RNA sequence: GGGAACGACUCGAGUAGAGUCGAAAAUGAAUCCCGCAGAUGGACUGUUUGGGAGCUGUCUUACUGAGAAACGCACAGAGAUUCUGUCGUUGGGUGGUGUUACGUGCGAGUGCGUCGGUAUCGGGAAUUCUAAUAGUGGUUGUCAGGUCGAUACCAACUAUCUUGGGUGAUUCGUCACCCAAGAUAGAAAAGAAACAACAACAACAAC
Reactivity to DMS in 0.01 (KOAc 150mM, MgCl2 10mM, bicine 150mM(pH8.5), 24C), signal-to-noise 1, nucleotides 027 to 156: u010g040a160a190u000c000c010c000g030c140a100g020a150u010g030g010a120c050u000g020u000u000u000g010g020g020a140g020c030u000g000u000c040u000u000a170c110u000g010a150g000a060a060a080c010g030c040a050c050a070g000a170g000a100u010u010c020u000g010u000c010g020u010u020g000g000g020u020g000g000u000g000u010u000a050c070g020u000g010c060g030a090g020u000g010c030g000u000c030g000g010u000a030u010c020g050g010g010a030a120u000u000c040u000a010a110u010a140g020u010g000g020u000u000g030u030c020a070g010g020u000c020g000a070u000a070c010c020a030a240
Reactivity to 2A3 in 0.01 (KOAc 150mM, MgCl2 10mM, bicine 150mM(pH8.5), 24C), signal-to-noise 2, nucleotides 027 to 156: u130g060a010a080u020c000c020c000g070c030a040g030a160u150g030g030a040c040u070g000u200u090u110g060g000g000a050g000c050u030g020u000c020u060u150a150c050u080g050a010g070a090a120a030c020g040c080a010c030a020g070a020g040a130u140u080c010u060g020u030c020g050u080u050g050g000g010u050g000g000u050g040u090u070a010c040g000u030g030c030g020a040g050u010g000c040g000u020c030g030g000u010a040u050c020g010g020g050a020a080u120u040c010u080a110a100u080a190g100u080g140g020u040u050g050u070c040a050g110g000u060c020g050a010u040a040c020c000a010a040
Chemical mapping of a 207-nucleotide RNA with DMS and 2A3. DMS adducts were read by reverse transcription with MarathonRT. The reactions ran in a buffer of 150 mM KOAc, 10 mM MgCl2 and 150 mM bicine (pH 8.5), at 24 C. The data come from the RNA Mapping Database (RMDB), library OK3TST. Values cover nucleotides 27 to 156.